[RMDB]
RNA sequence: GGGAACGACUCGAGUAGAGUCGAAAAGUGAGAAAGGCAGCGACAGUGGUGAAUGCAGGAAAAGCAGAGAAAAAGUACCGCAGUGUACCACUCAGGCGGUGCAAGUAGUCGAUGGAGUCAUUGGUAGCACUCGUAAUUACUUCGGUAAUUACGAGUGAAAAGAAACAACAACAACAAC
Reactivity to DMS in 0.01 (KOAc 150mM, MgCl2 10mM, bicine 150mM(pH8.5), 24C), signal-to-noise 5, nucleotides 027 to 126: g020u010g020a110g010a060a080a080g000g010c030a050g030c070g020a070c110a040g010u000g000g020u000g010a070a080u000g020c040a050g000g010a060a070a070a130g010c050a050g000a120g020a060a050a120a120a090g010u000a030c010c000g020c030a070g010u010g010u000a060c090c070a060c060u000c120a080g000g010c030g010g010u000g010c030a030a040g010u010a040g020u000c040g000a060u000g000g010a080g010u010c060a070u000u000g000g000u010a080g000
Reactivity to 2A3 in 0.01 (KOAc 150mM, MgCl2 10mM, bicine 150mM(pH8.5), 24C), signal-to-noise 3, nucleotides 027 to 126: g090u070g000a070g070a080a090a040g050g030c000a030g010c000g040a020c030a030g020u020g050g010u020g040a110a050u070g020c030a060g040g100a070a020a010a020g030c050a020g020a020g080a110a100a030a030a030g010u000a020c000c020g040c050a030g050u020g020u110a140c050c040a030c040u060c010a020g080g000c010g000g000u010g000c000a000a020g060u090a000g000u030c040g010a070u060g040g000a040g020u040c020a050u040u080g070g020u080a030g050